[RMDB]
RNA sequence: GGGAACGACUCGAGUAGAGUCGAAAAAGCGAGUACGUACUCGUCGAAAAGACGAGUACUCCGCGCGCAAAGUACUCGCAGCUCAGAAAUCAAAGUAUCCGAUAAGGAUAAGCGCGCGGACUGAGCACAUGGAGUAGGUAUUCGUACCUACUCCAUGAAAAGAAACAACAACAACAAC
Reactivity to DMS in 0.01 (KOAc 150mM, MgCl2 10mM, bicine 150mM(pH8.5), 24C), signal-to-noise 2, nucleotides 027 to 126: a030g000c020g000a000g000u010a010c010g020u000a000c010u000c000g010u000c000g000a130a080a150a140g000a000c000g010a000g000u010a000c020u000c010c000g020c000g000c010g010c020a110a040a150g010u000a000c000u000c020g010c000a080g000c000u000c000a060g010a150a100a070u050c150a120a070a110g030u010a000u000c010c000g020a100u050a120a180g000g000a020u000a020a130g010c010g000c000g040c020g000g010a050c190u000g000a060g000c030a300
Reactivity to 2A3 in 0.01 (KOAc 150mM, MgCl2 10mM, bicine 150mM(pH8.5), 24C), signal-to-noise 9, nucleotides 027 to 126: a000g000c000g000a000g000u010a010c030g000u000a000c000u000c000g000u000c000g050a170a130a020a040g000a000c000g000a000g000u000a000c010u000c000c000g000c000g000c000g010c080a240a070a000g010u000a010c000u000c000g000c010a020g010c010u010c010a020g070a090a180a150u120c070a150a110a040g100u040a030u000c000c010g080a180u140a300a080g000g000a000u020a040a030g020c010g010c000g000c000g010g000a000c030u070g030a020g020c030a000